Structure probing data (2A3 and DMS) for a 177-nucleotide construct. For DMS, 1,297 sequencing reads were counted. Reactivities are given for positions 27 through 126.
RNA sequence: GGGAACGACUCGAGUAGAGUCGAAAAAGCUGCGCGAAAUCGGCGGAAAGGACCCCGCUAUCGGGAGUGGCUAGCAGCGAGGGUUGCCGCUCCAGCCGCGCUAUGAAGCAGGCAUAGCAGAUUUACACAUAAUCAUGCACUUCGGUGCAUGAUUAUGAAAAGAAACAACAACAACAAC
Reactivity to 2A3 in 0.01 (KOAc 150mM, MgCl2 10mM, bicine 150mM(pH8.5), 24C), signal-to-noise 1, nucleotides 027 to 126: a000g040c000u010g020c030g000c020g110a110a130a010u180c070g040g000c070g010g020a070a180a040g170g040a070c010c000c060c000g020c040u090a080u070c000g050g030g030a020g010u010g000g030c020u030a100g000c030a010g060c010g060a150g090g130g050u060u080g000c000c000g000c010u000c000c010a000g000c060c010g070c020g020c040u020a120u240g070a090a000g000c040a020g030g020c000a020u020a050g040c040a010g020a090u040u050u220a040c150a000
Reactivity to DMS in 0.01 (KOAc 150mM, MgCl2 10mM, bicine 150mM(pH8.5), 24C), signal-to-noise 2, nucleotides 027 to 126: a090g020c040u010g010c040g010c060g000a020a070a050u010c120g000g000c000g000g020a090a140a160g020g010a120c090c020c020c000g000c020u000a100u010c100g020g010g020a080g010u000g030g020c030u000a060g000c090a040g020c030g040a110g000g000g030u010u000g040c010c000g000c030u010c020c020a170g010c020c050g010c120g000c000u000a050u000g000a130a050g030c050a140g010g000c010a020u000a240g000c010a110g000a070u000u010u000a090c270a190